[RMDB]
RNA sequence: GGGAACGACUCGAGUAGAGUCGAAAAUUUUGGGUAAGCAAAACAGUAAUAUAAGCUAGCCACAGCCUUAGUGAGGCAAGCCUAACUCAGUGAGGAUUGAGACCUAAAAUUAUUGCCUUCCUCUGAGCCUUGAGUUCUUUUUCGAAAGAACUCAAGGAAAAGAAACAACAACAACAAC
Reactivity to 2A3 in 0.01 (KOAc 150mM, MgCl2 10mM, bicine 150mM(pH8.5), 24C), signal-to-noise 3, nucleotides 027 to 126: u030u020u020u020g030g010g010u050a070a010g050c060a050a060a060a160c030a070g080u120a190a180u130a040u030a280a040g030c010u020a010g030c010c020a050c040a040g030c010c040u080u060a080g070u070g080a000g030g000c030a030a010g030c030c010u060a060a040c000u000c030a020g060u020g140a080g050g030a050u020u120g020a020g030a040c000c020u040a020a030a030a040u090u080a080u050u160g070c000c010u000u030c020c000u030c040u040g090a030g040
Reactivity to DMS in 0.01 (KOAc 150mM, MgCl2 10mM, bicine 150mM(pH8.5), 24C), signal-to-noise 3, nucleotides 027 to 126: u000u010u000u000g000g020g010u000a080a140g000c040a060a030a080a170c110a100g010u000a080a070u000a070u010a100a190g010c020u000a090g020c020c090a100c080a110g000c060c080u020u000a100g020u010g000a060g010g000c040a070a040g000c060c040u010a060a110c020u000c030a030g000u000g000a090g030g000a120u000u000g010a080g010a070c020c010u000a010a010a010a020u000u000a080u010u000g010c070c040u000u020c040c040u000c060u000g020a120g010
An RNA of 177 nucleotides, treated with 2A3 and DMS and read out base by base. For 2A3, 2,357 sequencing reads were counted. Source: RMDB library OK2TRN, as collected in RNAgym.